[RMDB]
RNA sequence: GGGAACGACUCGAGUAGAGUCGAAAAUAAAUGUACCUUUUGUUCACACUUUUUGAAAGCAUGCCCUUUAAUUGUUGUUGCAAGGGUAAAUUGUAAGUUUUACGAUAUACCGAAUUGUAGUGAAUUUUGAAAUUGUGACGUUCUCACGAAUGAAGCGGUCUAUUUAUACGUUCGCGUAUAAAUAGACAAAAGAAACAACAACAACAAC
Reactivity to DMS in 0.01 (KOAc 150mM, MgCl2 10mM, bicine 150mM(pH8.5), 24C), signal-to-noise 2, nucleotides 027 to 156: u010a070a060a100u000g010u000a300c090c020u010u000u000u010g020u010u000c030a060c040a080c060u000u000u000u000u020g000a090a060a050g010c040a090u000g020c000c000c020u000u000u010a090a070u000u010g010u000u010g000u000u000g000c020a050a090g040g000g080u000a030a050a060u000u000g000u000a000a130g000u010u010u000u000a020c030g020a060u000a100u000a070c000c010g000a060a080u000u000g010u000a130g030u010g010a050a080u000u010u010u000g020a040a060a120u010u010g020u000g000a110c070g000u000u000c020u010c080a180c140g010a070a090u000g020a120a150g020c060g020
Reactivity to 2A3 in 0.01 (KOAc 150mM, MgCl2 10mM, bicine 150mM(pH8.5), 24C), signal-to-noise 3, nucleotides 027 to 156: u130a000a040a020u110g040u190a100c020c000u010u100u110u200g020u010u070c010a020c020a020c030u070u060u020u100u210g090a100a040a010g020c020a010u040g020c000c020c010u040u100u060a190a180u080u090g020u000u010g010u010u030g040c030a010a010g050g000g030u040a030a110a060u090u040g030u060a050a170g100u060u100u160u090a030c030g000a040u020a000u040a160c000c010g110a020a050u070u020g050u040a120g000u020g080a020a020u070u120u120u200g100a090a110a060u090u060g070u060g020a050c090g040u070u080c040u020c030a020c040g060a060a070u190g030a180a000g120c020g000

An RNA of 207 nucleotides, treated with DMS and 2A3 and read out base by base. For DMS the reverse transcriptase was MarathonRT. The data come from the RNA Mapping Database (RMDB), library OK3TST. For 2A3 the reverse transcriptase was SuperScript II with manganese.